[RMDB]
RNA sequence: GGGAACGACUCGAGUAGAGUCGAAAAUUGGAGAUGAAGGUGAGAAAUUGUUCUAACUGAGAGCUAUGUAUGGAAAAAAAUGUGCGAACAGAUGCAGCUCAGUGUAUAAUAUUGCGUCCUGUUCAUACCUUUUACCAUGAUUCGUCAUGGUAAAAGGAAAAGAAACAACAACAACAAC
Reactivity to DMS in 0.01 (KOAc 150mM, MgCl2 10mM, bicine 150mM(pH8.5), 24C), signal-to-noise 7, nucleotides 027 to 126: u000u000g000g010a080g010a050u010g020a080a050g010g010u000g010a100g000a050a060a100u000u010g020u000u010c040u010a100a100c040u000g000a060g010a230g010c050u000a050u000g010u000a050u010g020g010a000a010a040a110a050a070a100u010g010u010g030c120g000a040a030c020a040g000a080u010g010c030a040g000c080u000c060a030g010u000g000u000a050u000a070a100u000a110u000u000g010c050g010u000c060c070u000g010u000u010c030a100u010a110
Reactivity to 2A3 in 0.01 (KOAc 150mM, MgCl2 10mM, bicine 150mM(pH8.5), 24C), signal-to-noise 5, nucleotides 027 to 126: u090u060g050g010a060g030a050u060g020a060a030g020g020u050g010a050g030a040a090a060u110u080g040u070u050c040u060a070a100c030u030g040a030g010a010g050c040u040a030u100g070u050a080u100g050g050a080a070a010a000a020a030a080u170g050u080g060c050g010a010a000c000a010g020a030u070g010c010a020g010c020u030c040a020g030u030g040u100a070u040a240a100u110a090u100u060g010c010g020u020c020c050u000g020u020u040c020a020u100a110